[RMDB]
RNA sequence: GGGAACGACUCGAGUAGAGUCGAAAAGGUUACGCAAUGCAAUGUGGUCACCACUUAAAUAUUAACGUAUUUAACCGUGAAACAUUAAUAGAUGCAAUGGAACAUCCAGAAGAAUAUCCACAGUUAACGUACAGCAGCGAUUCGUCGCUGCUGUACGAAAAGAAACAACAACAACAAC
Reactivity to DMS in 0.01 (KOAc 150mM, MgCl2 10mM, bicine 150mM(pH8.5), 24C), signal-to-noise 1, nucleotides 027 to 126: g000g030u000u000a270c100g010c040a100a000u000g000c150a000a000u000g000u010g000g030u000c000a010c030c130a040c300u000u000a000a020a120u010a000u000u000a030a120c140g030u000a000u030u000u010a000a050c190c300g000u050g000a030a000a120c050a050u000u000a030a180u000a240g000a120u030g000c080a150a190u000g000g050a040a000c110a090u000c000c020a090g000a110a020g020a090a090u000a020u030c000c010a000c070a010g000u000u000a000a020
Reactivity to 2A3 in 0.01 (KOAc 150mM, MgCl2 10mM, bicine 150mM(pH8.5), 24C), signal-to-noise 3, nucleotides 027 to 126: g090g010u120u110a100c070g000c090a120a060u170g080c050a070a040u020g040u020g160g010u000c020a030c000c000a090c000u040u080a120a010a000u060a050u210u220a170a000c020g010u000a000u000u090u050a040a000c000c060g000u010g040a000a030a000c000a040u020u260a120a140u080a240g040a060u030g020c000a000a020u020g010g020a080a000c000a020u120c070c060a030g100a140a000g020a050a220u020a120u130c010c080a100c040a160g070u000u050a180a020